[RMDB]
RNA sequence: GGGAACGACUCGAGUAGAGUCGAAAACUGUCUCACUGUCUGAGUGACACUGUCUGUGAGACUCUGUGUCAGAGUCAGAGACAGUGAGACAGUCUGUCAGUGACAGACAGUCAGAGACACUCAGUGAGCUUACAACGGGGUUCGCCCCGUUGUAAGCAAAAGAAACAACAACAACAAC
Reactivity to 2A3 in 0.01 (KOAc 150mM, MgCl2 10mM, bicine 150mM(pH8.5), 24C), signal-to-noise 2, nucleotides 027 to 126: c030u030g020u070c010u000c010a040c020u080g030u070c020u010g040a020g060u020g050a050c010a010c010u020g010u000c000u000g280u110g140a150g030a090c010u030c070u050g210u040g210u130c060a010g010a010g080u010c020a010g010a010g000a080c010a010g000u000g000a010g030a010c000a000g010u000c010u000g020u000c010a190g110u000g250a040c010a000g020a020c020a020g020u010c000a000g050a030g010a150c000a010c030u000c000a060g040u020g120a060
Reactivity to DMS in 0.01 (KOAc 150mM, MgCl2 10mM, bicine 150mM(pH8.5), 24C), signal-to-noise 2, nucleotides 027 to 126: c080u020g000u000c020u000c000a080c070u010g040u000c060u000g010a080g020u000g010a300c000a040c030u000g000u000c010u020g020u030g010a230g000a000c010u000c040u000g000u010g020u020c070a000g010a050g020u000c030a180g000a030g000a000c010a010g010u000g000a060g000a020c000a020g010u000c000u010g000u000c010a240g030u020g000a050c030a060g000a030c020a060g010u010c050a120g000a200g010a130c040a020c030u000c010a020g000u000g000a200